This 177-nucleotide RNA was probed chemically with 2A3 and DMS.
High 2A3 reactivity points to a flexible backbone, as in loops and unpaired stretches.
The 2A3 profile rests on 3,392 reads.
Reactivities are given for positions 27 through 126.
The RNA was probed in 150 mM KOAc, 10 mM MgCl2 and 150 mM bicine (pH 8.5) at 24 C.
RNA sequence: GGGAACGACUCGAGUAGAGUCGAAAAAAUUUUUUCGGUCUCGUCAGACAAAUCAGUGACAUGAUGGUCAUAGCGAAAGCACACGCACGAAAUGUCACUGAUCAAAAAGUGCGUGUGACCAAUUUAAACUACCGUAGGAAUUCGUUCCUACGGUAGUAAAAGAAACAACAACAACAAC
Reactivity to 2A3 in 0.01 (KOAc 150mM, MgCl2 10mM, bicine 150mM(pH8.5), 24C), signal-to-noise 3, nucleotides 027 to 126: a000a000u170u120u040u010u020u080c030g070g000u010c020u010c020g070u100c070a010g030a090c050a020a140a000u030c000a000g000u030g010a000c020a030u170g060a110u090g200g020u060c060a110u200a050g020c020g070a150a040a010g000c000a000c010a000c000g010c000a010c030g060a140a080a090u040g000u000c000a000c010u000g010a010u020c000a000a120a020a030a010g010u000g010c020g000u000g000u010g000a000c000c000a040a050u110u150u210a120a100
Reactivity to DMS in 0.01 (KOAc 150mM, MgCl2 10mM, bicine 150mM(pH8.5), 24C), signal-to-noise 3, nucleotides 027 to 126: a070a030u000u000u000u000u000u000c070g020g010u020c010u000c140g000u010c120a070g000a060c090a070a090a020u000c010a020g010u000g010a010c020a090u010g010a150u000g010g010u000c030a060u000a080g000c010g000a100a040a120g010c010a120c030a030c020g010c020a020c010g000a060a070a040u000g010u000c020a010c010u000g000a020u000c120a030a060a060a070a080g010u000g010c000g040u000g010u000g010a030c020c030a050a100u010u000u000a070a110